[RMDB]
RNA sequence: GGGAACGACUCGAGUAGAGUCGAAAAUGCGUUAGUGAUGUGCGGAAUAACCUGCACGGUUGCGCCGAGGUAGUCACCGCGGCGUUCUUUACGCAGAACGUCAGAGUAGAUACGACCCGUGGUGAAAGCACUAAUUAUAGUUCGCUAUAAUUAGUGCAAAAGAAACAACAACAACAAC
Reactivity to DMS in 0.01 (KOAc 150mM, MgCl2 10mM, bicine 150mM(pH8.5), 24C), signal-to-noise 9, nucleotides 027 to 126: u010g020c020g010u000u000a070g020u010g020a070u000g020u010g010c010g000g010a160a130u010a090a110c160c010u000g020c070a060c060g020g010u010u000g010c180g010c030c030g000a060g010g010u000a100g010u010c090a070c010c010g010c140g010g000c010g010u000u000c010u000u000u010a070c120g030c140a080g000a040a050c030g010u000c070a100g010a120g010u010a100g010a120u010a060c100g000a110c030c000c010g020u010g010g010u000g000a080a090a130
Reactivity to 2A3 in 0.01 (KOAc 150mM, MgCl2 10mM, bicine 150mM(pH8.5), 24C), signal-to-noise 9, nucleotides 027 to 126: u070g000c010g020u040u100a050g040u100g200a120u140g060u040g020c020g010g070a130a110u180a160a130c030c010u040g020c030a010c010g000g070u100u100g010c030g000c010c020g030a040g070g080u130a070g140u100c040a000c030c010g000c040g010g000c010g010u010u000c000u020u040u020a040c050g000c020a010g030a050a010c010g030u040c060a020g020a030g150u120a030g030a120u090a110c050g040a050c020c000c010g050u090g030g050u090g040a090a060a020